The record gives the reactivity of an RNA of 177 nucleotides to DMS and 2A3. The RNA was probed in 150 mM KOAc, 10 mM MgCl2 and 150 mM bicine (pH 8.5) at 24 C. DMS adducts were read by reverse transcription with MarathonRT.
RNA sequence: GGGAACGACUCGAGUAGAGUCGAAAAAUCGGUAGUAGCGACGGCAGUGUGUACACAGGGCUGGGACGUAAUGAAUGCGAGUUAAUGGAAAUUCCAAGUUCAUGUGAACAGUUUCAGUUCACAAUUCCACCUAGGAUAGUUUCGACUAUCCUAGGUGAAAAGAAACAACAACAACAAC
Reactivity to DMS in 0.01 (KOAc 150mM, MgCl2 10mM, bicine 150mM(pH8.5), 24C), signal-to-noise 6, nucleotides 027 to 126: a030u020c040g000g010u030a050g010u010a040g010c060g010a060c070g010g020c050a060g040u000g020u000g020u010a050c050a060c100a080g000g000g010c000u000g010g000g010a050c050g010u020a050a040u020g000a080a050u010g000c120g010a080g010u020u020a100a090u020g010g010a040a060a110u000u010c020c030a050a140g000u010u010c040a080u010g010u000g010a010a020c020a100g000u020u020u030c140a110g000u000u010c000a010c040a030a100u030u010c080
Reactivity to 2A3 in 0.01 (KOAc 150mM, MgCl2 10mM, bicine 150mM(pH8.5), 24C), signal-to-noise 8, nucleotides 027 to 126: a010u080c030g030g010u040a050g010u020a020g050c020g030a040c030g040g000c030a030g010u010g010u020g010u080a020c040a010c010a070g010g030g000c000u020g010g010g020a010c010g030u060a020a060u090g060a030a020u070g030c050g020a030g060u060u100a090a070u140g090g060a050a090a120u120u010c010c000a050a030g060u050u080c060a050u120g010u020g040a030a020c030a080g030u040u140u140c040a010g000u020u020c010a000c000a030a020u130u030c050